[RMDB]
RNA sequence: GGGAACGACUCGAGUAGAGUCGAAAAGACUGCGUGCACUGGAGACGAUAUCGAGCCGGAAAUUAAUCGAUAAUGUCUCUAGUAGUGGAUACGAUCCGGCAAGUAUCGACUACGUGUGCUCGUAGGACCAUACGUAGUACUUCGGUACUACGUAUGGAAAAGAAACAACAACAACAAC
Reactivity to DMS in 0.01 (KOAc 150mM, MgCl2 10mM, bicine 150mM(pH8.5), 24C), signal-to-noise 3, nucleotides 027 to 126: g000a220c020u000g000c020g010u000g020c010a020c000u060g000g010a000g000a010c000g010a110u000a010u010c010g030a050g010c000c010g000g000a140a090a120u050u030a090a100u000c010g000a020u000a010a050u010g000u000c000u020c000u000a060g010u010a000g030u000g000g010a000u000a000c000g010a070u000c010c000g010g040c000a080a200g000u000a000u000c000g000a000c000u010a000c000g010u030g000u000g000c000u000c010g030u000a000g020g000a090
Reactivity to 2A3 in 0.01 (KOAc 150mM, MgCl2 10mM, bicine 150mM(pH8.5), 24C), signal-to-noise 9, nucleotides 027 to 126: g070a020c000u000g000c000g000u010g000c010a000c010u040g000g000a000g000a000c030g030a030u000a000u060c010g010a010g000c000c010g000g130a090a120a070u300u290a100a180u120c010g000a000u010a050a070u120g010u000c000u000c000u020a020g000u000a000g000u020g110g000a000u000a000c010g010a030u010c000c000g000g000c050a080a010g000u000a000u010c030g070a000c000u000a010c000g090u090g000u000g020c000u000c000g000u010a000g000g010a000